[RMDB]
Overview:
Source: RMDB library OK1LIB, as collected in RNAgym. An RNA of 177 nucleotides, treated with 2A3 and read out base by base. Reactivities are given for positions 27 through 126. Conditions: 150 mM KOAc, 10 mM MgCl2 and 150 mM bicine (pH 8.5), 24 C.
RNA sequence: GGGAACGACUCGAGUAGAGUCGAAAAACUUUUGUAUGGCCACAACACGAACGAAGCUGGCCUCAAUGAUAAAUCGCUUGAAUUCUGAUUGGAGAGAAGGACUUGACCAUGCUAUGCCAGUGUUGAAGCCGGGUGUACAAUUCGUUGUACACCCGGCAAAAGAAACAACAACAACAAC
Reactivity to 2A3 in 0.01 (KOAc 150mM, MgCl2 10mM, bicine 150mM(pH8.5), 24C), signal-to-noise 1, nucleotides 027 to 126: a010c050u000u000u110u130g140u060a300u300g000g000c010c010a010c000a000a000c000a080c040g190a110a080c080g000a140a000g060c000u000g030g000c000c010u060c000a000a000u030g110a140u240a110a050a030u020c000g090c110u020u000g080a020a010u240u040c000u130g040a270u230u260g090g000a130g050a000g020a060a180g000g000a000c000u000u000g000a000c030c030a060u080g000c040u090a090u000g000c000c090a000g000u000g000u000u000g020a000a000